[RMDB]
This 177-nucleotide RNA was probed chemically with DMS.

RNA sequence: GGGAACGACUCGAGUAGAGUCGAAAAGAUAUGGACGAAGAGUUGACCGCCUCCUAGGGAGAACGCUGUCGGAAACGACAGGACUGUUCGAGGAUCUAGUGAGGCGGUCAACUCUUCGUCCUAAGUCGUUAAAAGGUAUCUUCGGAUACCUUUUAACAAAAGAAACAACAACAACAAC
Reactivity to DMS in 0.01 (KOAc 150mM, MgCl2 10mM, bicine 150mM(pH8.5), 24C), signal-to-noise 1, nucleotides 027 to 126: g000a130u010a300u010g020g020a020c010g020a030a000g000a040g020u000u000g000a030c020c000g030c010c000u020c020c010u000a010g010g010g000a020g010a010a000c010g000c000u000g000u000c010g000g020a090a090a240c000g020a010c010a000g010g000a140c020u020g000u010u000c010g000a110g010g000a030u010c010u000a010g000u030g040a010g020g010c000g060g000u000c000a000a020c000u010c010u010u000c010g010u000c000c010u000a010a070g010u010c120
The RNA was probed in 150 mM KOAc, 10 mM MgCl2 and 150 mM bicine (pH 8.5) at 24 C.
The data come from the RNA Mapping Database (RMDB), library TTRINS.